The record gives the reactivity of an RNA of 207 nucleotides to 2A3 and DMS. For 2A3 the reverse transcriptase was SuperScript II with manganese. Reactivities are rounded to 0.1 and cut off at 0 and 3. The 2A3 profile rests on 4,888 reads.

RNA sequence: GGGAACGACUCGAGUAGAGUCGAAAAUAAGCAAAAGACAACCACCUUUCCCGCUGACAAUAGCGUUAUCCCUCUGCACUUCGGUAAUAUGAGGGCACAGUAAAUCCCGUAAGGAUGAGAAUGUGAUUAAACAGUUACAGCUUCGGCUGUAACUGAAGUUAUUUCUAUAGUUCGCUAUAGAAAUAACAAAAGAAACAACAACAACAAC
Reactivity to 2A3 in 0.01 (KOAc 150mM, MgCl2 10mM, bicine 150mM(pH8.5), 24C), signal-to-noise 6, nucleotides 027 to 156: u150a020a020g080c050a040a080a050a030g080a080c060a070a050c030c040a060c020c030u020u030u050c020c020c010g000c060u050g040a070c100a130a180u110a130g040c040g040u090u120a080u090c000c000c000u020c000u020g020c030a020c030u050u060c150g070g000u040a040a020u120a070u300g000a000g000g010g000c000a000c000a000g020u020a010a060a010u020c010c000c030g090u080a070a050g020g010a020u020g000a010g000a020a030u040g010u010g020a020u040u220a080a140a030c000a000g000u000u000a000c000a000g000c000u020u060c120g120g000c000u000g000u000a000a000c000u000g000a010a000
Reactivity to DMS in 0.01 (KOAc 150mM, MgCl2 10mM, bicine 150mM(pH8.5), 24C), signal-to-noise 3, nucleotides 027 to 156: u030a070a090g030c040a080a050a070a120g010a150c050a150a120c050c030a140c070c060u000u010u000c020c000c010g000c060u000g020a110c080a100a090u000a040g010c090g020u010u000a110u000c000c000c010u000c010u000g030c090a070c080u010u000c140g050g000u000a070a180u000a110u010g000a040g020g030g020c050a020c050a090g020u010a040a100a050u000c000c000c030g010u010a100a110g000g010a020u000g020a090g000a100a090u000g010u000g010a100u000u010a090a090a150c010a020g020u000u000a020c010a000g010c000u000u010c300g040g000c000u020g000u000a000a010c010u000g010a010a090